[RMDB]
RNA sequence: GGGAACGACUCGAGUAGAGUCGAAAAAACAGCGACCUAAAGGGGCUGUUCAGCUGAGGUUUUGUUCGUAUGAGCAGGCAAAGGAACGUGCUCAAUUGGCGCGUAAGAGGCAGGAAGAAGAAGAGGCCUGCACUGUUGGAUUCGUCCAACAGUGCAGAAAAGAAACAACAACAACAAC
Reactivity to 2A3 in 0.01 (KOAc 150mM, MgCl2 10mM, bicine 150mM(pH8.5), 24C), signal-to-noise 2, nucleotides 027 to 126: a000a010c030a010g010c020g080a300c020c020u160a050a040a010g000g000g010g010c000u020g050u000u010c060a080g010c000u050g070a120g030g150u000u040u200u060g000u030u020c010g000u130a110u300g030a000g020c010a010g070g090c050a050a020a050g000g020a010a000c020g100u030g010c000u080c100a120a250u050u180g030g000c010g000c000g090u090a050a090g030a020g060g020c020a010g040g000a060a070g020a010a010g000a000a000g080a010g020g000c010
Reactivity to DMS in 0.01 (KOAc 150mM, MgCl2 10mM, bicine 150mM(pH8.5), 24C), signal-to-noise 2, nucleotides 027 to 126: a050a060c060a030g030c030g000a180c010c060u000a050a080a150g030g000g000g000c000u000g020u000u000c030a030g000c130u020g010a240g000g000u000u010u000u030g010u000u010c030g010u050a040u020g060a040g000c010a020g000g010c010a060a150a160g030g020a050a030c030g020u020g020c030u000c140a100a080u000u000g000g000c000g040c000g000u010a030a040g000a010g000g010c030a120g030g000a090a060g010a100a060g000a040a020g010a040g000g020c070
This 177-nucleotide RNA was probed chemically with 2A3 and DMS. For 2A3, 676 sequencing reads were counted. The reactions ran in a buffer of 150 mM KOAc, 10 mM MgCl2 and 150 mM bicine (pH 8.5), at 24 C. Reactivities are given for positions 27 through 126.